[RMDB]
RNA sequence: GGGAACGACUCGAGUAGAGUCGAAAAGAUAGAUAGUACUCGUAAAAACUCUCUUUCGCAGGCCGCGUAUUUUGAGAGACGAAGCCGUGAAGUAGCGAAAGCUACGACGAAGCGCGUGCACGGCCGAUGCGCGAACAGCAUCACGUACGAGUACGAAAAAUAAUACUAUCUUCGGAUAGUAUUAUUUAAAAGAAACAACAACAACAAC
Reactivity to 2A3 in 0.01 (KOAc 150mM, MgCl2 10mM, bicine 150mM(pH8.5), 24C), signal-to-noise 5, nucleotides 027 to 156: g050a040u220a020g050a030u070a050g000u000a000c000u000c000g000u020a020a050a050a130a140c040u000c000u000c000u010u040u060c030g010c040a100g020g170c110c070g010c020g020u090a100u020u160u140u140g020a020g000a000g010a010c040g050a070a010g010c000c000g000u010g050a110a020g010u010a010g000c010g020a070a040a010g000c000u000a000c010g020a020c030g080a120a040g090c090g010c020g110u060g030c000a000c010g010g000c010c020g020a020u010g000c040g000c050g050a100a040c030a050g000c000a020u010c010a010c040g010u020a000c010g000a000g000u000a000c000g020a010a010
Reactivity to DMS in 0.01 (KOAc 150mM, MgCl2 10mM, bicine 150mM(pH8.5), 24C), signal-to-noise 4, nucleotides 027 to 156: g010a180u000a080g010a170u000a170g010u000a020c000u010c010g030u010a050a060a100a110a090c030u000c010u000c040u000u000u000c030g020c030a170g030g030c130c090g020c040g040u010a080u000u000u000u030g000a060g010a070g050a120c080g000a110a080g030c010c010g000u000g020a110a190g020u000a020g010c010g010a160a090a250g020c000u000a010c000g010a120c070g010a090a130g030c030g010c050g040u000g030c000a020c010g000g020c000c010g010a200u000g040c000g010c050g010a050a140c110a130g010c010a130u000c020a070c070g020u000a010c010g000a040g010u000a010c010g000a010a070